[RMDB]
RNA sequence: GGGAACGACUCGAGUAGAGUCGAAAAGGGGUCGAAGCUUUCGCAACGAUGAAACGACUUGUCAGCCUACCUGAAGCCUCCACGGGUAGGCUUGGAUUUAGUCGUGGAGUUGCGUUAGCUUCGACGGAGGCACCCAAAACGGCCGUUCGCGGCCGAACACCUAAUAUCGGUUCGCCGAUAUUAGGUGAAAAGAAACAACAACAACAAC
Reactivity to 2A3 in 0.01 (KOAc 150mM, MgCl2 10mM, bicine 150mM(pH8.5), 24C), signal-to-noise 1, nucleotides 027 to 156: g000g010g000g000u010c000g010a000a000g010c000u000u000u000c000g030c010a010a010c010g300a300u000g010a000a010a000c010g000a000c010u020u030g020u070c020a000g010c000c000u000a010c000c000u010g060a100a000g000c000c010u000c000c000a060c020g000g000g000u000a000g000g000c000u000u020g010g010a000u140u000u130a000g010u000c000g000u000g010g000a000g000u000u000g000c000g000u000u000a000g000c000u010u010c000g000a010c000g010g000a000g000g010c010a040c000c010c000a010a110a020a010c020g000g000c010c000g010u030u090c300g000c000g120g000c000c000g000a010a020
Background
Structure probing data (2A3) for a 207-nucleotide construct. The data come from the RNA Mapping Database (RMDB), library RNAMAK. The 2A3 profile rests on 1,942 reads. The RNA was probed in 150 mM KOAc, 10 mM MgCl2 and 150 mM bicine (pH 8.5) at 24 C. Values cover nucleotides 27 to 156.